[RMDB]
RNA sequence: GGGAACGACUCGAGUAGAGUCGAAAAGACACCCUUGGCAGAUGACCUCCUCGUUGGUGAGUGUCGGUAAUGUUGUCAGUCACAGGCAACAGUUAACGAUCUGCAUAAAUAAAAAGAGAAGAACAAACGAGGUAAUAUUAUUCGUAAUAUUACCUCGAAAAGAAACAACAACAACAAC
Reactivity to DMS in 0.01 (KOAc 150mM, MgCl2 10mM, bicine 150mM(pH8.5), 24C), signal-to-noise 6, nucleotides 027 to 126: g020a060c100a070c010c010c010u010u010g010g020c010a010g000a020u000g010a050c000c010u010c070c010u010c100g000u020u020g000g020u020g000a080g000u010g000u010c010g000g010u010a110a130u000g000u000u000g000u010c000a070g020u050c280a130c300a110g000g000c000a000a010c000a010g010u020u010a020a030c050g010a020u000c000u000g000c000a080u040a070a080a070u050a040a090a030a090a090g010a090g020a100a090g010a090a050c180a050a100a170
Reactivity to 2A3 in 0.01 (KOAc 150mM, MgCl2 10mM, bicine 150mM(pH8.5), 24C), signal-to-noise 9, nucleotides 027 to 126: g030a020c030a090c020c010c000u030u090g060g000c010a000g010a050u020g030a030c000c000u020c000c010u080c070g160u100u240g060g050u190g070a100g010u190g020u030c020g030g000u070a100a060u030g010u010u010g010u000c020a040g110u110c060a040c040a130g000g000c000a000a000c000a030g010u010u080a030a040c060g040a020u000c000u000g000c010a000u090a010a060a010u080a000a040a010a010a010g130a020g030a140a010g040a050a030c050a070a080a010